[RMDB]
RNA sequence: GGGAACGACUCGAGUAGAGUCGAAAAGAUAUGGAAGGAAUGACGUCGGUAAUACUCGGAAACGAGUGCCAGACGCAUUUCCUUCCUAAGUCAAACCCUGUCUUCCUGUUCGCAGGAAGACAGGGAAGCCUAGAAAUAAGUUCGCUUAUUUCUAGGCAAAAGAAACAACAACAACAAC
Reactivity to 2A3 in 0.01 (KOAc 150mM, MgCl2 10mM, bicine 150mM(pH8.5), 24C), signal-to-noise 7, nucleotides 027 to 126: g010a020u060a020u130g000g000a000a000g010g030a010a010u030g210a280c010g000u010c020g000g000u090a230a110u070a300c000u000c010g030g010a060a060a030c010g010a000g010u010g000c000c010a050g000a010c000g000c000a000u010u020u030c000c000u000u000c000c000u000a020a000g010u000c020a020a010a240c000c000c000u000g000u010c000u010u000c000c010u020g050u080u110c300g020c110a000g000g000a000a000g000a000c000a000g000g000g000a000a010
Reactivity to DMS in 0.01 (KOAc 150mM, MgCl2 10mM, bicine 150mM(pH8.5), 24C), signal-to-noise 6, nucleotides 027 to 126: g000a030u000a300u010g000g010a020a010g010g000a030a010u000g000a130c010g020u000c010g000g010u000a060a060u010a070c000u010c000g000g000a090a080a160c010g010a010g060u000g000c000c000a110g020a000c000g010c010a010u000u010u010c000c000u000u000c000c000u000a010a060g000u010c030a150a120a160c000c000c010u000g000u000c000u000u000c000c000u010g000u000u000c200g010c000a010g000g010a010a000g010a000c000a000g000g010g000a000a020
The record gives the reactivity of an RNA of 177 nucleotides to 2A3 and DMS. The reactions ran in a buffer of 150 mM KOAc, 10 mM MgCl2 and 150 mM bicine (pH 8.5), at 24 C. The 2A3 profile rests on 32,838 reads. Source: RMDB library TTRDEL, as collected in RNAgym. 2A3 adducts were read by reverse transcription with SuperScript II with manganese. Values cover nucleotides 27 to 126. For DMS the reverse transcriptase was MarathonRT.